[RMDB]
RNA sequence: GGGAACGACUCGAGUAGAGUCGAAAAUCAGGAGCACAGGGUCGGGACAGGUGGCUGGCAUCUUUUAAUGCCUUAGCUUAUGUUCUUUAUACCAACUUGGCCUGUGCUCAGAGUGAGGGAGGCCCUGCCUACAGAUCCGGUUCGCCGGAUCUGUAGGAAAAGAAACAACAACAACAAC
Reactivity to 2A3 in 0.01 (KOAc 150mM, MgCl2 10mM, bicine 150mM(pH8.5), 24C), signal-to-noise 2, nucleotides 027 to 126: u110c020a030g120g030a000g030c000a020c000a010g010g000g250u090c020g040g090g000a000c010a030g000g080u120g000g140c000u010g030g000c010a000u010c040u030u300u080u300a100a020u000g000c000c000u050u210a020g000c000u100u100a070u070g030u010u060c020u020u170u070a170u050a050c060c040a040a120c050u050u140g030g030c000c010u030g000u010g000c010u000c000a000g010a000g000u070g000a060g000g090g020a060g020g030c000c010c000u050g030
Reactivity to DMS in 0.01 (KOAc 150mM, MgCl2 10mM, bicine 150mM(pH8.5), 24C), signal-to-noise 2, nucleotides 027 to 126: u000c070a080g010g000a020g020c000a000c020a030g020g020g030u010c170g000g010g000a040c030a030g020g030u000g010g020c010u000g000g020c010a010u000c110u020u040u010u010a060a080u000g000c000c010u010u010a040g010c020u000u000a140u000g000u010u010c020u000u010u000a110u010a260c140c110a090a100c170u010u020g020g010c000c000u000g020u000g020c000u000c000a010g000a060g000u010g000a090g020g000g010a100g010g000c000c020c020u010g000